[RMDB]
An RNA of 177 nucleotides, treated with 2A3 and DMS and read out base by base. The RNA was probed in 150 mM KOAc, 10 mM MgCl2 and 150 mM bicine (pH 8.5) at 24 C.
RNA sequence: GGGAACGACUCGAGUAGAGUCGAAAAGUUGCCGACGAACCUUCCUACCUUCCAAACGUCGUUUUCGACAACCUUCCAACCUUCCAAUCUACUCGAGAGGAGGAGGAGGAGGAGGAGGAGGAAUUAAACUAGAAGGUAGUUUCGACUACCUUCUAGUAAAAGAAACAACAACAACAAC
Reactivity to 2A3 in 0.01 (KOAc 150mM, MgCl2 10mM, bicine 150mM(pH8.5), 24C), signal-to-noise 5, nucleotides 027 to 126: g030u040u070g140c020c010g040a080c050g020a080a050c010c000u040u010c020c000u040a230c010c010u090u000c020c030a090a080a060c060g010u010c030g010u050u030u060u130c020g010a010c010a060a040c010c030u060u040c040c020a090a080c040c020u100u090c010c020a050a060u010c020u050a080c040u040c060g030a020g010a030g050g030a020g020g020a050g010g020a060g010g040a040g020g060a040g020g060a010g010g020a020g010g030a020a010u110u090a140a090
Reactivity to DMS in 0.01 (KOAc 150mM, MgCl2 10mM, bicine 150mM(pH8.5), 24C), signal-to-noise 5, nucleotides 027 to 126: g000u000u000g030c060c020g010a120c140g000a080a090c080c040u000u000c010c010u000a100c050c020u000u000c020c060a060a160a150c190g010u000c030g020u010u000u010u000c020g010a020c040a110a150c020c030u000u000c030c030a090a110c070c040u000u000c030c030a090a250u000c010u000a040c120u010c060g000a030g000a240g000g000a130g000g000a160g010g010a130g000g030a140g010g010a120g010g000a120g000g000a080g000g000a270a070u010u000a030a110
For 2A3, 6,044 sequencing reads were counted.